[RMDB]
RNA sequence: GGGAACGACUCGAGUAGAGUCGAAAAACAGGCUGCAUGACUACGCCUGGCUAAUUUUGGGUUUACAUUUGGAAAAGUCUGAUGCUUAUUUUAAAAGAGAACAGGGUGAUGCUACAUUAUCAGGACAUGUUUUCUGUCCCAAGUGAUAGAAAAAUCACACCUUAUGUUGAUUCGUCAACAUAAGGUGAAAAGAAACAACAACAACAAC
Reactivity to DMS in 0.01 (KOAc 150mM, MgCl2 10mM, bicine 150mM(pH8.5), 24C), signal-to-noise 3, nucleotides 027 to 156: a060c040a050g060g010c020u010g000c040a140u010g030a200c040u000a040c050g020c010c000u010g010g010c040u000a050a100u000u000u000u000g010g000g000u000u010u010a080c030a090u000u000u020g040g000a090a130a090a090g000u010c020u010g020a110u000g000c030u000u010a110u000u010u000u000a050a070a070a110g000a160g010a040a040c050a080g000g040g030u000g020a080u010g020c050u000a060c030a070u000u000a050u010c050a070g010g020a050c060a050u010g000u000u000u010u000c040u010g000u010c000c020c030a080a090g030u000g010a050u010a090g010a020a020a020a080a100u000c050a130
Reactivity to 2A3 in 0.01 (KOAc 150mM, MgCl2 10mM, bicine 150mM(pH8.5), 24C), signal-to-noise 5, nucleotides 027 to 156: a000c020a000g020g000c010u040g000c020a120u090g040a100c040u050a020c120g010c000c020u020g000g000c040u050a060a150u060u060u070u110g050g010g030u060u070u070a050c050a070u100u060u090g090g010a060a080a060a060g030u010c030u040g040a060u060g010c010u030u030a110u110u180u050u170a050a140a030a000g070a000g010a050a010c040a050g010g000g040u040g030a020u040g020c020u030a030c030a060u050u100a040u140c040a010g010g040a010c020a050u050g020u000u040u030u000c010u020g010u010c010c010c000a150a060g060u080g100a010u030a090g170a040a080a020a010a000u100c040a020

This 207-nucleotide RNA was probed chemically with DMS and 2A3. Conditions: 150 mM KOAc, 10 mM MgCl2 and 150 mM bicine (pH 8.5), 24 C. It was measured as part of the RMDB library OK3TST. 2A3 adducts were read by reverse transcription with SuperScript II with manganese. For DMS, 6,508 sequencing reads were counted.